[RMDB]
RNA sequence: GGGAACGACUCGAGUAGAGUCGAAAACAGCCGCUACGGCGGCUGACUUCUCGGUGACGAGAAGACAACAAAAAAUAUCAAAAAAUAAGACCGUCGUACGCGACGGUCAGACAAUUACUACGGUAAUUGUCACAUUCGCGUGAGCGAAUGACAGAGACUACGGUCUCUGACAUCGAACUUCGGUUCGAUGACUCUUGACGGUGACGUCAAGAGAACGGUAAGCGUGAGCUUACCGAAAGCCUAUUUGUACGGGUUGAGUACAAACAACACAGAUCUUCGGAUCUGUGAAAAGAAACAACAACAACAAC
Reactivity to 2A3 in 0.01 (KOAc 150mM, MgCl2 10mM, bicine 150mM(pH8.5), 24C), signal-to-noise 2, nucleotides 027 to 266: c000a000g000c010c010g060c030u050a040c300g130g000c010g010g020c010u010g000a020c000u000u000c010u000c000g020g030u070g010a010c000g010a000g020a000a000g020a010c050a060a100c150a030a110a050a030a030a030u300a030u220c140a090a170a120a100a030a050u200a160a040g020a010c000c000g020u030c000g030u100a000c210g020c050g100a020c010g020g000u020c000a020g000a010c000a000a000u020u010a020c010u020a010c260g100g000u000a000a000u000u000g000u000c010a020c000a010u010u010c020g020c040g050u090g090a030g000c000g010a000a000u010g010a000c020a000g000a000g000a010c010u020a020c300g120g000u000c000u000c000u020g020a020c010a000u010c010g000a000a000c010u020u060c200g130g000u000u000c000g020a000u010g010a000c000u000c000u000u030g000a000c000g000g080u080g100a020c000g000u000c000a000a000g000a000g000a070a030c020g000g000u000a000a000g000c000g000u010g030a010g000c010u000u000a000c000c000g000a000a000a000g000c000c000u000a010u020u000u010g000u000a000c020g010g010g050u250u220g080a050g040u020a000c020a010a010a000c020a020a030

Annotation
Structure probing data (2A3) for a 307-nucleotide construct. The RNA was probed in 150 mM KOAc, 10 mM MgCl2 and 150 mM bicine (pH 8.5) at 24 C.